[RMDB]
RNA sequence: GGGAACGACUCGAGUAGAGUCGAAAAAAAAAAACGUGACUGCGCGUCGUGAGCUCGCUGAGACGUUCUGGACGGGGGACAGGCCGUGGGGUUUCUCAGAUAACUGGGCCCCUGGGCUCAGGAGGCCACCUGGUUUAUUUUUCGAAAUAAACCAGGUAAAAGAAACAACAACAACAAC
Reactivity to DMS in 0.01 (KOAc 150mM, MgCl2 10mM, bicine 150mM(pH8.5), 24C), signal-to-noise 4, nucleotides 027 to 126: a000a000a060a060a050a070a040c060g020u000g010a130c070u010g010c070g020c060g020u000c030g000u010g000a110g010c030u000c030g010c050u000g000a080g010a100c050g010u000u000c020u000g010g010a110c080g010g000g000g010g000a140c100a060g000g000c050c030g030u000g010g010g000g010u010u010u020c020u000c020a100g010a150u010a060a120c020u000g000g000g010c030c000c010c100u010g000g010g010c020u000c010a030g000g000a080g010g000c050c080
Reactivity to 2A3 in 0.01 (KOAc 150mM, MgCl2 10mM, bicine 150mM(pH8.5), 24C), signal-to-noise 2, nucleotides 027 to 126: a020a000a010a010a000a020a000c040g000u030g060a060c050u060g010c020g010c000g090u010c000g050u050g070a020g020c000u010c010g010c040u050g020a000g010a050c020g020u040u020c000u040g090g030a040c040g020g010g000g010g010a010c020a010g030g020c020c020g010u030g000g040g010g010u020u200u020c040u000c010a020g030a140u170a160a150c030u020g000g020g000c000c010c010c040u100g030g000g000c010u010c010a020g020g030a020g030g050c010c000
Background
Conditions: 150 mM KOAc, 10 mM MgCl2 and 150 mM bicine (pH 8.5), 24 C. The record gives the reactivity of an RNA of 177 nucleotides to DMS and 2A3. Reactivities are given for positions 27 through 126. DMS (dimethyl sulfate) methylates the pairing face of unpaired adenines and cytosines. For DMS the reverse transcriptase was MarathonRT.